[RMDB]
RNA sequence: GGGAACGACUCGAGUAGAGUCGAAAAUGUGGGAGCGAGAUUAAGGCUUGCUGGUUAUCACGUUAAACGUAGUCAGUCUUUUUCUCUCUCCUAUCGCGGCACAGUGUGCACUUCGGUGCACACUGUGGAUACUGAUCGGAUUCGUCCGAUCAGUAUCAAAAGAAACAACAACAACAAC
Reactivity to DMS in 0.01 (KOAc 150mM, MgCl2 10mM, bicine 150mM(pH8.5), 24C), signal-to-noise 6, nucleotides 027 to 126: u010g020u010g010g000g010a020g020c110g000a020g010a010u000u000a010a010g010g010c010u000u010g020c010u000g010g000u000u000a090u010c190a120c280g010u010u010a070a050a040c020g000u010a020g010u000c220a010g010u000c000u000u000u000u000u000c000u000c010u000c000u000c000c000u000a000u010c070g010c180g010g000c010a010c000a000g020u000g010u000g010c000a000c000u000u010c180g020g000u000g000c000a000c000a000c000u000g010u000g000
Reactivity to 2A3 in 0.01 (KOAc 150mM, MgCl2 10mM, bicine 150mM(pH8.5), 24C), signal-to-noise 7, nucleotides 027 to 126: u250g010u050g010g000g000a000g000c020g010a000g000a010u010u010a010a010g000g000c010u010u020g020c010u020g040g040u090u060a180u260c100a040c240g040u100u220a100a090a020c060g050u030a030g030u020c030a000g000u010c010u000u000u000u000u000c000u000c000u000c000u000c000c000u010a020u060c030g020c060g120g010c010a000c000a010g000u000g000u000g010c000a000c020u040u060c240g090g000u000g000c000a000c010a010c000u000g000u000g000
The record gives the reactivity of an RNA of 177 nucleotides to DMS and 2A3. Reactivities are rounded to 0.1 and cut off at 0 and 3. The data come from the RNA Mapping Database (RMDB), library RFMREP. For DMS, 13,209 sequencing reads were counted. Conditions: 150 mM KOAc, 10 mM MgCl2 and 150 mM bicine (pH 8.5), 24 C.